[RMDB]
Structure probing data (DMS) for a 177-nucleotide construct. Reactivities are rounded to 0.1 and cut off at 0 and 3. For DMS, 1,099 sequencing reads were counted.

RNA sequence: GGGAACGACUCGAGUAGAGUCGAAAAAUGUUGACAUGGUAGUUCAGUUCUUAACCAAUGACUUGGGGAUGAUGCAAACAAUUACUGUCGUUGGGAUUUAGAGUGUAUUAGUCACGCAUGUAUGGGGAAAGACCAUGCACUUCGGUGCAUGGUCUUUAAAAGAAACAACAACAACAAC
Reactivity to DMS in 0.01 (KOAc 150mM, MgCl2 10mM, bicine 150mM(pH8.5), 24C), signal-to-noise 1, nucleotides 027 to 126: a040u000g030u000u000g020a020c040a060u010g000g010u000a050g020u010u010c030a030g000u000u000c030u000u000a170a180c020c020a010a010u010g020a040c050u000u000g010g000g010g020a170u010g000a060u000g010c170a070a060a110c200a020a030u000u010a080c030u000g000u000c030g050u010u000g020g000g000a090u000u000u000a010g020a060g000u000g010u000a100u000u010a090g020u000c070a030c200g010c130a050u010g000u000a060u000g000g010g010g020